This 207-nucleotide RNA was probed chemically with DMS and 2A3. For 2A3 the reverse transcriptase was SuperScript II with manganese. Conditions: 150 mM KOAc, 10 mM MgCl2 and 150 mM bicine (pH 8.5), 24 C. It was measured as part of the RMDB library OK3TST. For 2A3, 3,376 sequencing reads were counted.
RNA sequence: GGGAACGACUCGAGUAGAGUCGAAAAGUAUCGCGUUCGCCGCGAAACGCAGCGUCCACUCCACGCUGGACUUCUUCCUGUCCGGGCGUUCCCUACCCGCAUGGGUGACCGGGUUGGCGUUCGUGUCGGCGAAUCUGGGAGCUACCGAGAUUCUCGGAUUCUGUAUAAGUUUCGACUUAUACAGAAUAAAAGAAACAACAACAACAAC
Reactivity to DMS in 0.01 (KOAc 150mM, MgCl2 10mM, bicine 150mM(pH8.5), 24C), signal-to-noise 3, nucleotides 027 to 156: g020u000a050u010c030g040c060g030u000u000c070g020c040c000g040c080g000a030a040a040c060g010c030a080g030c020g000u060c030c060a070c070u000c040c110a080c060g020c030u010g040g010a090c040u000u000c050u010u010c080c040u000g020u000c030c010g000g000g060c020g010u040u010c040c030c030u000a300c020c000c000g000c140a080u000g000g010g000u000g010a090c060c050g020g010g000u000u010g020g010c020g020u000u000c040g020u000g010u000c020g020g000c000g010a030a030u000c050u010g010g010g000a140g020c040u010a110c030c020g000a110g010a220u000u000c010u000c010g020g000
Reactivity to 2A3 in 0.01 (KOAc 150mM, MgCl2 10mM, bicine 150mM(pH8.5), 24C), signal-to-noise 4, nucleotides 027 to 156: g040u050a080u250c020g000c020g120u020u040c050g020c090c000g010c060g030a240a110a010c030g010c060a010g000c000g020u020c010c050a030c030u070c040c030a050c060g030c060u060g000g050a020c030u100u080c020u150u060c090c050u050g030u000c010c010g050g040g000c010g000u070u050c000c000c010u020a040c000c010c020g130c180a210u300g010g030g000u030g040a080c010c080g010g010g000u020u020g010g000c020g010u010u020c040g010u010g140u150c030g010g000c000g010a020a010u040c070u050g070g010g010a020g030c020u060a060c010c030g030a030g070a300u280u090c020u000c040g020g010